[RMDB]
Chemical mapping of a 177-nucleotide RNA with DMS. For DMS, 783 sequencing reads were counted. Conditions: 150 mM KOAc, 10 mM MgCl2 and 150 mM bicine (pH 8.5), 24 C. It was measured as part of the RMDB library OK2TST. For DMS the reverse transcriptase was MarathonRT.

RNA sequence: GGGAACGACUCGAGUAGAGUCGAAAAUUUUAUGGUAAUUAAUCAGGGUGUCGGAGCAGGCAUGAAUAACAUCCCCCGCCAGUGGGUAUGGGUUAACUUCCUGAUAAUCCACUUCAAUAGAGGAUGAACCUCAACUUCAUUUCGAUGAAGUUGAGGUAAAAGAAACAACAACAACAAC
Reactivity to DMS in 0.01 (KOAc 150mM, MgCl2 10mM, bicine 150mM(pH8.5), 24C), signal-to-noise 1, nucleotides 027 to 126: u020u020u020u010a060u010g010g020u010a050a080u000u010a080a130u010c030a070g000g020g010u000g010u020c110g040g000a110g010c070a040g010g000c030a030u010g010a030a070u000a030a130c030a030u000c000c000c000c000c130g010c170c140a050g020u000g010g020g020u000a010u010g000g000g000u000u000a050a120c190u010u000c000c010u010g000a080u000a040a030u010c000c000a020c030u000u000c090a090a130u000a070g000a110g000g040a100u000g000a160